[RMDB]
RNA sequence: GGGAACGACUCGAGUAGAGUCGAAAAAGGUGUUUUCUCCUGCACCUUUAUCAAUGGAGGAACUCGACUUUGCUGUGGGUCCCAAAGGGACCUUAGGUGCAGACAGUUACCGGCGGUGAAGUGUGAGCAUAGGUUCGUGUCUUCGGACACGAACCAAGCGAUCAUUUUACUUCGGUAAAAUGAUCGCAAAAGAAACAACAACAACAAC
Reactivity to 2A3 in 0.01 (KOAc 150mM, MgCl2 10mM, bicine 150mM(pH8.5), 24C), signal-to-noise 2, nucleotides 027 to 156: a000g000g000u010g030u010u050u030u010c020u020c000c000u050g020c000a000c000c030u050u140u100a120u090c080a050a070u140g000g020a010g030g030a050a060c000u000c020g020a020c040u020u030u030g000c000u050g000u090g010g000g020u030c000c010c010a090a140a100g000g000g000a030c000c000u010u050a050g000g000u000g000c000a050g080a270c060a000g030u050u070a010c020c000g050g000c010g000g010u040g010a020a000g030u050g080u130g080a000g010c090a090u130a210g000g000u000u000c000g000u010g000u000c000u000u010c200g050g000a000c000a000c010g000a000a000c000c000a000a000
The record gives the reactivity of an RNA of 207 nucleotides to 2A3. For 2A3, 1,053 sequencing reads were counted. Values cover nucleotides 27 to 156. The RNA was probed in 150 mM KOAc, 10 mM MgCl2 and 150 mM bicine (pH 8.5) at 24 C. 2A3 adducts were read by reverse transcription with SuperScript II with manganese.